Chemical mapping of a 177-nucleotide RNA with 2A3. For 2A3, 796 sequencing reads were counted. As a SHAPE reagent, 2A3 marks flexible, mostly unpaired nucleotides at the ribose 2'-OH. It was measured as part of the RMDB library RFM100.
[RMDB]
RNA sequence: GGGAACGACUCGAGUAGAGUCGAAAAACGCAUGCGAUACGUCGCAUGCGACAAAGCAAGGGAAAGGUUGUAGCUCUUAUGUCUCAUUUUGAUUAGCAUAAGCGUAUGGCUUUUCCCCUGCAGUGAAGAAUGGCAAGACCUUCGGGUCUUGCCAUUCAAAAGAAACAACAACAACAAC
Reactivity to 2A3 in 0.01 (KOAc 150mM, MgCl2 10mM, bicine 150mM(pH8.5), 24C), signal-to-noise 2, nucleotides 027 to 126: a000c000g000c000a000u000g000c040g010a010u010a020c300g100u010c000g070c000a000u000g000c000g000a000c000a050a110a000g000c000a000a000g020g000g010a040a000a000g020g000u040u040g010u070a110g100c000u060c000u000u040a050u000g150u000c030u000c030a160u080u070u200u280g300a160u150u040a020g000c000a000u000a000a020g000c020g000u000a000u020g000g000c000u000u000u000u000c000c000c000c000u000g040c000a000g060u010g080a070a100